[RMDB]
RNA sequence: GGGAACGACUCGAGUAGAGUCGAAAAAUGAGAUCCCAUCUUGCACACUGUGCUAAUUUGAGACUCUCAUGCCUCCUACUUGGAGAGAUCUGGACUAGAAGUCAGGGCAUCUGACUCUGCCAGCCACAAAACGUACAAGGCUUCGGCCUUGUACGAAUCUGAUGUUUUAGUUCGCUAAAACAUCAGAAAAAGAAACAACAACAACAAC
Reactivity to 2A3 in 0.01 (KOAc 150mM, MgCl2 10mM, bicine 150mM(pH8.5), 24C), signal-to-noise 8, nucleotides 027 to 156: a000u020g000a010g000a020u010c010c000c000a010u010c020u010u030g000c000a020c030a090c200u300g020u010g020c050u090a040a090u010u010u040g030a040g000a020c050u000c000u000c030a010u060g040c010c010u020c010c010u100a240c110u120u220g030g010a060g000a010g020a090u040c000u010g010g030a080c050u100a120g020a140a000g080u010c010a010g060g050g150c100a150u100c100u010g000a000c000u000c000u010g000c010c000a020g020c030c000a080c020a030a130a070a030c010g000u000a000c000a000a000g000g000c010u040u100c170g050g000c000c000u000u010g000u000a000c000g000a000a010
Reactivity to DMS in 0.01 (KOAc 150mM, MgCl2 10mM, bicine 150mM(pH8.5), 24C), signal-to-noise 3, nucleotides 027 to 156: a020u000g010a010g000a070u000c020c000c000a030u000c050u000u000g020c000a010c010a210c110u000g040u000g010c020u010a020a040u000u000u020g010a040g000a040c050u010c000u010c020a040u000g020c120c050u010c040c010u000a100c170u000u000g020g010a100g010a140g000a110u000c000u000g000g000a080c040u010a100g010a110a070g010u000c020a030g010g010g030c230a120u000c010u000g010a010c010u000c020u000g000c010c010a030g020c060c020a090c120a060a080a070a160c020g010u010a010c010a030a020g030g020c000u000u000c300g060g040c010c030u000u010g020u010a000c020g010a000a030
The data come from the RNA Mapping Database (RMDB), library M2RFPK. Structure probing data (2A3 and DMS) for a 207-nucleotide construct. For 2A3, 8,023 sequencing reads were counted. The RNA was probed in 150 mM KOAc, 10 mM MgCl2 and 150 mM bicine (pH 8.5) at 24 C.